[RMDB]
RNA sequence: GGGAACGACUCGAGUAGAGUCGAAAAUCAUUGGCUUCGCUGCGCGCUGCGUUGCCUAGGCUUCAGAUGCUACGUACUGUUGCCAACGUUGCAAUUUCCAAACGCUAAUGCGAAAGUGUGCAAACAACUCAGUGACAGACUUCGGUCUGUCACUGAGAAAAGAAACAACAACAACAAC
Reactivity to 2A3 in 0.01 (KOAc 150mM, MgCl2 10mM, bicine 150mM(pH8.5), 24C), signal-to-noise 1, nucleotides 027 to 126: u060c010a000u000u150g010g000c000u000u000c010g050c110u200g000c000g030c010g020c040u020g000c030g000u010u010g000c020c000u020a070g000g000c030u040u020c060a040g010a200u070g100c080u040a050c030g080u020a060c020u040g000u030u020g000c000c050a110a000c040g060u050u060g020c040a070a110u020u000u050c010c000a040a040a000c020g020c040u150a190a050u230g000c020g030a050a000a020g030u020g000u000g010c020a050a000a090c000a000a030
Reactivity to DMS in 0.01 (KOAc 150mM, MgCl2 10mM, bicine 150mM(pH8.5), 24C), signal-to-noise 1, nucleotides 027 to 126: u000c060a130u010u000g000g060c010u010u000c030g040c010u000g000c070g000c040g060c000u000g040c060g030u000u000g060c020c000u000a140g000g000c060u020u000c040a090g000a180u000g020c070u000a020c130g060u030a060c110u010g000u000u020g020c020c010a140a130c130g000u040u000g020c060a070a070u000u000u000c080c010a070a070a260c040g030c000u000a120a140u000g040c040g000a050a070a090g010u000g000u000g000c030a210a060a180c150a050a160
Source: RMDB library M2PK90, as collected in RNAgym.
Structure probing data (2A3 and DMS) for a 177-nucleotide construct.
The RNA was probed in 150 mM KOAc, 10 mM MgCl2 and 150 mM bicine (pH 8.5) at 24 C.
Reactivities are given for positions 27 through 126.